[RMDB]
RNA sequence: GGGAACGACUCGAGUAGAGUCGAAAAGAUGAGGUCAAGGUGAACGUGACGGUGCGCCGGUCGACGGCGCUGCUGGGCGGCACCGGUGCAGUAGUGCAAGAAGGUGGGCCUCAGGUGGUCGACGGGGAGUCUUAUGCUUAUUCGUAAGCAUAAGACUAAAAGAAACAACAACAACAAC
Reactivity to DMS in 0.01 (KOAc 150mM, MgCl2 10mM, bicine 150mM(pH8.5), 24C), signal-to-noise 9, nucleotides 027 to 126: g010a110u010g010a030g000g020u000c040a160a130g010g010u010g000a070a070c040g010u000g000a110c030g010g020u000g010c010g010c000c010g010g010u020c160g000a150c020g000g000c000g010c010u000g020c030u000g000g000g000c010g010g000c020a020c010c010g000g020u010g000c020a040g010u030a090g020u000g000c020a050a080g010a090a100g010g020u020g000g000g000c010c010u000c020a040g010g010u000g010g000u000c020g000a070c040g000g010g010g010
Reactivity to 2A3 in 0.01 (KOAc 150mM, MgCl2 10mM, bicine 150mM(pH8.5), 24C), signal-to-noise 9, nucleotides 027 to 126: g090a050u090g010a000g020g030u040c050a050a060g030g020u060g050a190a040c020g030u050g140a090c010g010g020u030g000c020g000c010c020g020g010u180c100g070a130c010g020g000c030g010c020u010g000c010u030g000g060g020c010g010g010c010a000c000c010g000g000u020g000c010a020g040u280a040g090u020g030c020a040a040g090a060a030g170g060u120g020g030g010c000c000u020c010a010g010g050u080g020g020u040c030g010a030c020g010g000g020g010
This 177-nucleotide RNA was probed chemically with DMS and 2A3.
Source: RMDB libraries RFM100 and RFMREP, as collected in RNAgym.
The RNA was probed in 150 mM KOAc, 10 mM MgCl2 and 150 mM bicine (pH 8.5) at 24 C.